This 177-nucleotide RNA was probed chemically with DMS and 2A3. In probing experiments dimethyl sulfate is read out at A N1 and C N3, which are open when not base-paired. Reactivities are given for positions 27 through 126. DMS adducts were read by reverse transcription with MarathonRT.
[RMDB]
RNA sequence: GGGAACGACUCGAGUAGAGUCGAAAAGGCGAGGACGUGGGCGGACCGGCGGGAUGGGCUCCAGUCACCGGCUCGGUGGGCGACCGUCCCUUCCCAUGAGUCCACACGGUAAGCGCCUCUGGCCCGACUUUAAAUUGCCUUUCGAGGCAAUUUAAAGAAAAGAAACAACAACAACAAC
Reactivity to DMS in 0.01 (KOAc 150mM, MgCl2 10mM, bicine 150mM(pH8.5), 24C), signal-to-noise 4, nucleotides 027 to 126: g000g000c000g000a040g020g010a140c030g000u000g000g000g000c130g010g000a040c040c030g020g040c300g010g000g010a020u000g010g000g000c040u000c050c070a120g010u020c010a030c000c020g020g000c140u060c130g020g010u010g000g010g010c080g000a100c090c090g000u010c000c000c000u000u010c040c000c020a100u030g010a150g010u000c010c000a030c030a020c030g000g010u070a190a140g010c020g000c020c000u000c030u000g000g010c000c000c000g000a190
Reactivity to 2A3 in 0.01 (KOAc 150mM, MgCl2 10mM, bicine 150mM(pH8.5), 24C), signal-to-noise 9, nucleotides 027 to 126: g010g010c020g010a070g060g070a090c020g000u030g010g060g170c170g010g010a010c010c020g050g030c120g010g000g010a010u030g020g010g020c080u040c030c030a030g060u060c000a010c040c020g230g070c140u120c160g030g000u090g030g030g040c030g020a040c010c030g090u140c000c000c020u060u100c010c000c010a020u160g020a020g010u000c010c000a000c000a000c010g000g020u140a050a040g030c010g000c000c000u020c020u030g090g010c000c000c000g000a010